The data come from the RNA Mapping Database (RMDB), library TTRDES. Chemical mapping of a 177-nucleotide RNA with DMS and 2A3. For DMS, 2,330 sequencing reads were counted.
[RMDB]
RNA sequence: GGGAACGACUCGAGUAGAGUCGAAAAGAUAUGGAUCUACUAGCAAGGUCAGUGUCGGAAACGACACGGGACUGAUGACCUAGACGGAUCCUAAGUCAAAACAUCAAGCAGUUCGCUGCUUGAUGAAGCAUACUGCUACGUUCGCGUAGCAGUAUGCAAAAGAAACAACAACAACAAC
Reactivity to DMS in 0.01 (KOAc 150mM, MgCl2 10mM, bicine 150mM(pH8.5), 24C), signal-to-noise 3, nucleotides 027 to 126: g000a010u000a040u010g000g000a030u010c000u000a110c010u000a010g000c010a100a040g060g060u010c000a300g000u000g000u010c000g010g010a010a010a020c020g010a000c000a010c000g020g020g010a020c010u010g000a070u030g000a030c300c010u000a010g010a090c290g000g000a010u000c010c010u000a010a180g000u000c000a140a110a180a250c020a000u000c000a010a000g000c000a010g000u000u020c270g020c010u000g000c000u000u010g000a000u000g000a080a130
Reactivity to 2A3 in 0.01 (KOAc 150mM, MgCl2 10mM, bicine 150mM(pH8.5), 24C), signal-to-noise 2, nucleotides 027 to 126: g000a010u010a030u060g000g000a000u000c010u020a030c010u010a020g000c050a150a100g000g020u050c030a070g000u000g010u000c010g000g010a000a020a020c000g010a000c020a000c010g020g110g020a000c010u000g030a240u040g010a000c010c000u030a010g140a160c300g040g010a000u000c000c000u000a000a000g000u010c040a000a000a030a240c010a020u000c010a000a010g030c000a010g020u080u240c300g070c230u000g000c000u000u000g000a000u010g020a000a010